The data come from the RNA Mapping Database (RMDB), library RNAMAK. This 207-nucleotide RNA was probed chemically with 2A3 and DMS. For 2A3, 7,295 sequencing reads were counted.
RNA sequence: GGGAACGACUCGAGUAGAGUCGAAAACGCUGGGUCCAGACAAAUCCCUGCUAUAAUCCUCUGAAGCGCGCACGGAGGGUAGCCUGGAUGAGGCUGGACCUGUGCUGAAGCGCGCACGGCAACCGAAAGGUGCGAAACGUCACGUUCGCGUGACGAACAAUGCAUUAGAGUUCGCUCUAAUGCAUUGAAAAGAAACAACAACAACAAC
Reactivity to 2A3 in 0.01 (KOAc 150mM, MgCl2 10mM, bicine 150mM(pH8.5), 24C), signal-to-noise 4, nucleotides 027 to 156: c030g000c010u020g000g000g000u000c000c000a010g020a030c030a010a150a010u020c010c000c010u000g010c000u030a050u120a300a290u300c010c000u000c020u030g060a200a070g020c010g000c000g000c010a000c030g020g010a000g000g020g010u010a000g000c000c030u030g000g000a030u030g030a020g080g020c000u000g000g000a000c000c000u000g000u010g010c000u020g020a140a040g000c010g000c000g000c000a010c010g010g020c010a010a040c000c010g050a100a030a020g020g000u020g010c000g020a100a100a020c010g000u010c000a010c020g010u050u060c220g010c010g110u000g010a000c010g000a020a010
Reactivity to DMS in 0.01 (KOAc 150mM, MgCl2 10mM, bicine 150mM(pH8.5), 24C), signal-to-noise 2, nucleotides 027 to 156: c090g050c010u000g000g050g000u010c030c040a040g020a050c030a070a190a080u000c010c000c020u000g030c000u000a110u000a220a120u000c000c030u060c020u000g000a060a070g030c000g060c010g060c030a300c030g000g000a030g020g030g010u000a030g020c030c030u010g040g040a050u000g010a300g020g020c000u000g000g020a030c000c000u010g000u000g040c030u010g030a060a050g020c030g030c020g010c030a300c100g020g020c030a040a100c030c020g030a100a100a200g010g000u000g020c000g000a050a080a160c010g010u000c000a000c000g020u000u000c290g060c020g010u000g010a030c000g020a110a180